Chemical mapping of a 177-nucleotide RNA with 2A3 and DMS. Source: RMDB library M2PK50, as collected in RNAgym. Conditions: 150 mM KOAc, 10 mM MgCl2 and 150 mM bicine (pH 8.5), 24 C. For 2A3, 4,955 sequencing reads were counted. For DMS, 1,990 sequencing reads were counted. Values cover nucleotides 27 to 126.
RNA sequence: GGGAACGACUCGAGUAGAGUCGAAAACUUCUACGCUUCGGCGUAGAAGAAAGGUGUUUGUCGCUCCACCAAAAUCGAAGGGAUAAAAAGUACGAAAGUACAAAACGCGAAUCUUCGGAUUCGCGAAGAUACACAGUAGCUUCGGCUACUGUGUAUCAAAAGAAACAACAACAACAAC
Reactivity to 2A3 in 0.01 (KOAc 150mM, MgCl2 10mM, bicine 150mM(pH8.5), 24C), signal-to-noise 3, nucleotides 027 to 126: c000u000u000c000u010a000c010g010c010u000u050c220g170g000c010g000u010a010g000a000a000g000a010a020a010g030g010u020g030u010u110u140g060u000c040g060c200u020c010c000a000c010c000a140a050a000a090u140c060g060a110a030g030g020g010a010u080a080a180a020a020a020g010u000a000c010g050a120a030a020g000u010a010c000a000a090a010a010c000g010c000g010a010a000u000c000u030u050c180g100g000a000u000u000c000g010c000g000a000a000
Reactivity to DMS in 0.01 (KOAc 150mM, MgCl2 10mM, bicine 150mM(pH8.5), 24C), signal-to-noise 2, nucleotides 027 to 126: c010u000u000c000u010a000c010g020c010u000u000c160g020g050c000g000u010a020g000a000a010g010a010a080a100g010g010u000g000u000u010u000g040u000c010g010c000u000c000c010a010c010c020a120a070a040a040u000c120g010a050a070g030g000g020a010u010a030a090a090a080a100g000u000a020c000g000a150a070a130g010u000a020c010a070a050a070a170c010g010c010g010a040a010u000c000u000u010c130g010g010a020u000u000c000g000c000g010a010a030